[RMDB]
RNA sequence: GGGAACGACUCGAGUAGAGUCGAAAAUGGGCACAGGCAAGGUUCGGUCCACCCCGUGCCGCCCCAACCACAGUACAAAUAUUCGCCGACCCUGCUUGUUCGCCCCGGGCGAUGCGACGGUGGUGCGCCGCUGCGCCUGUUUCGACAGGCGCAGCGGAAAAGAAACAACAACAACAAC
Reactivity to 2A3 in 0.01 (KOAc 150mM, MgCl2 10mM, bicine 150mM(pH8.5), 24C), signal-to-noise 1, nucleotides 027 to 126: u060g000g000g040c040a040c000a130g000g000c010a050a140g070g000u280u300c030g000g050u000c010c000a050c020c000c000c010g080u090g030c020c040g000c000c000c000c000a000a010c010c000a050c080a030g150u280a010c120a000a160a050u210a120u120u290c000g000c000c000g020a020c000c000c060u000g110c050u060u060g000u120u000c100g000c000c000c000c000g000g000g010c000g010a050u160g140c050g080a000c040g020g020u020g040g000u000g070c100g000
Structure probing data (2A3) for a 177-nucleotide construct. 2A3 adducts were read by reverse transcription with SuperScript II with manganese. As a SHAPE reagent, 2A3 marks flexible, mostly unpaired nucleotides at the ribose 2'-OH.